An RNA of 177 nucleotides, treated with 2A3 and DMS and read out base by base. As a SHAPE reagent, 2A3 marks flexible, mostly unpaired nucleotides at the ribose 2'-OH. For DMS, 4,659 sequencing reads were counted.
RNA sequence: GGGAACGACUCGAGUAGAGUCGAAAAGUAAGAUGAUUCGUCAUCUUACGAACCCGAUGAAGCGGCACAUACCGAGCUUCAUUCAUCUAAGAGUGCAAAUAAUGGCGCGUGGUUUCGACCACGCGAAGAUGAAACGAUUGUUCGCAAUCGUUUCAUCAAAAGAAACAACAACAACAAC
Reactivity to 2A3 in 0.01 (KOAc 150mM, MgCl2 10mM, bicine 150mM(pH8.5), 24C), signal-to-noise 6, nucleotides 027 to 126: g000u000a000a000g000a000u000g010a010u020u110c140g040u010c070a010u000c000u000u000a000c000g000a020a030c000c000c000g000a010u010g000a000a010g010c030g030g070c080a060c020a120u220a130c060c120g050a070g030c030u020u000c010a020u030u040c010a070u030c040u110a100a030g130a040g110u090g050c050a080a060a050u220a110a120u260g240g010c000g000c010g020u000g000g020u010u060u140c200g070a020c000c000a000c000g000c000g000a000a000
Reactivity to DMS in 0.01 (KOAc 150mM, MgCl2 10mM, bicine 150mM(pH8.5), 24C), signal-to-noise 4, nucleotides 027 to 126: g000u000a000a000g000a030u000g000a020u000u020c220g020u010c000a010u000c000u000u000a010c000g000a080a130c000c000c000g010a030u000g000a030a010g030c050g020g000c040a080c110a100u010a120c130c150g000a150g010c010u000u000c010a010u000u000c050a060u020c120u010a080a110g000a100g010u000g000c070a120a060a080u010a090a080u010g000g010c010g010c020g020u000g010g010u000u010u010c210g000a030c000c000a010c000g000c000g000a000a040
Conditions: 150 mM KOAc, 10 mM MgCl2 and 150 mM bicine (pH 8.5), 24 C. For 2A3, 8,455 sequencing reads were counted.